[RMDB]
RNA sequence: GGGAACGACUCGAGUAGAGUCGAAAACCCUCUCCUCAGGUGUAGACCACCUAUUAUCAUUUUACCUGUUUUGAUUCUCUGAUGAGCAAAGUCCCAAGACUUAUCAGCUGGGAUAGGCCUCAUUUACCAUAUUUAGAGAUUUCGAUCUCUAAAUAUGAAAAGAAACAACAACAACAAC
Reactivity to DMS in 0.01 (KOAc 150mM, MgCl2 10mM, bicine 150mM(pH8.5), 24C), signal-to-noise 7, nucleotides 027 to 126: c010c000c010u010c040u000c020c020u000c110a050g010g020u000g010u020a130g010a170c170c030a030c040c010u000a090u010u010a060u030c080a070u010u010u010u010a100c100c050u010g010u000u010u010u010g010a120u000u000c020u000c090u010g000a010u010g000a020g000c030a070a060a210g020u000c000c000c010a050a090g020a160c040u000u020a070u030c180a090g010c060u000g000g000g000a010u000a030g010g010c120c010u000c030a020u000u000u010a070c200
Reactivity to 2A3 in 0.01 (KOAc 150mM, MgCl2 10mM, bicine 150mM(pH8.5), 24C), signal-to-noise 9, nucleotides 027 to 126: c000c000c000u010c010u010c010c020u080c050a020g000g010u030g040u080a080g060a160c030c010a020c010c020u020a090u090u100a060u060c100a070u010u120u100u110a100c020c030u060g090u040u040u050u050g150a170u120u000c050u000c020u070g030a020u010g000a000g010c040a070a060a050g020u000c000c000c000a110a080g030a140c090u070u100a120u280c090a020g010c010u010g010g000g000a010u030a030g060g010c020c010u020c000a010u020u020u040a040c020
Structure probing data (DMS and 2A3) for a 177-nucleotide construct.
The RNA was probed in 150 mM KOAc, 10 mM MgCl2 and 150 mM bicine (pH 8.5) at 24 C.
It was measured as part of the RMDB libraries RFM100 and RFMREP.